[RMDB]
RNA sequence: GGGAACGACUCGAGUAGAGUCGAAAAGAUAUGGAUCACCUUAGGGAGAUCGCACAUCGGAAACGAUGUGAUGAUCGACGAUCUAAGGGUGAUCCUAAGUCAAAAGAUGCCACUUCGGUGGCAUCAACGGACUGUAAAAGUUCGCUUUUACAGUCCGAAAAGAAACAACAACAACAAC
Reactivity to DMS in 0.01 (KOAc 150mM, MgCl2 10mM, bicine 150mM(pH8.5), 24C), signal-to-noise 3, nucleotides 027 to 126: g010a020u000a260u010g000g010a000u000c000a040c010c000u000u000a010g000g000g000a020g010a010u000c000g010c000a030c000a000u000c000g000g000a060a030a100c000g030a020u010g010u000g000a050u000g000a000u000c000g010a070c300g020a040u010c000u000a010a030g020g020g020u020g000a010u000c000c010u010a010a050g010u010c020a110a090a140a140g040a020u000g000c000c000a000c000u000u000c270g050g000u010g000g000c000a000u000c010a060a080
Reactivity to 2A3 in 0.01 (KOAc 150mM, MgCl2 10mM, bicine 150mM(pH8.5), 24C), signal-to-noise 2, nucleotides 027 to 126: g000a000u020a010u080g000g000a000u000c000a020c030c000u000u000a010g010g040g020a080g010a010u010c000g000c010a010c010a010u000c000g010g000a020a040a020c010g000a010u000g010u030g060a120u080g000a000u000c010g080a070c020g010a010u000c010u010a020a040g140g000g000u050g000a000u000c000c000u010a020a000g010u000c010a020a060a010a210g000a010u010g000c000c000a000c000u050u160c300g110g010u000g000g040c000a000u000c000a000a010
This 177-nucleotide RNA was probed chemically with DMS and 2A3. Source: RMDB library TTRDES, as collected in RNAgym. The 2A3 profile rests on 7,156 reads.